[RMDB]
RNA sequence: GGGAACGACUCGAGUAGAGUCGAAAAUUUCUCCUUACGUUUGUAAUGCCCCUGGUUGUGGCGUUUCAGACGUUACUAAGCUAUAUUUAGGUGGUAUGAGCUACUUUUGUGUAGAUCAUAGACCUGUUCUGAGUUAUAUGUUCGCAUAUAACUCAGAAAAAGAAACAACAACAACAAC
Reactivity to DMS in 0.01 (KOAc 150mM, MgCl2 10mM, bicine 150mM(pH8.5), 24C), signal-to-noise 2, nucleotides 027 to 126: u010u000u010c010u000c030c210u000u010a010c010g010u000u000u000g010u000a010a020u000g010c010c000c050c080u010g030g010u000u010g020u010g010g010c010g020u000u000u010c010a000g010a010c010g010u000u010a040c230u000a090a100g020c180u010a100u020a130u010u010u020a010g010g010u000g010g000u000a010u010g010a020g010c000u000a010c000u010u010u010u000g040u000g030u010a010g000a040u000c010a000u000a020g000a020c010c000u000g010u000
Reactivity to 2A3 in 0.01 (KOAc 150mM, MgCl2 10mM, bicine 150mM(pH8.5), 24C), signal-to-noise 4, nucleotides 027 to 126: u020u040u000c050u050c010c000u040u030a000c010g000u000u000u020g010u010a000a010u010g000c000c000c020c000u040g280g040u150u070g130u090g020g000c010g010u000u010u020c000a000g000a000c010g000u010u010a010c010u040a030a050g070c030u070a050u020a090u300u130u160a030g010g000u030g040g070u030a010u010g010a010g030c000u010a010c010u090u140u260u190g250u050g000u040a010g000a000u000c010a000u000a000g040a010c000c000u000g030u020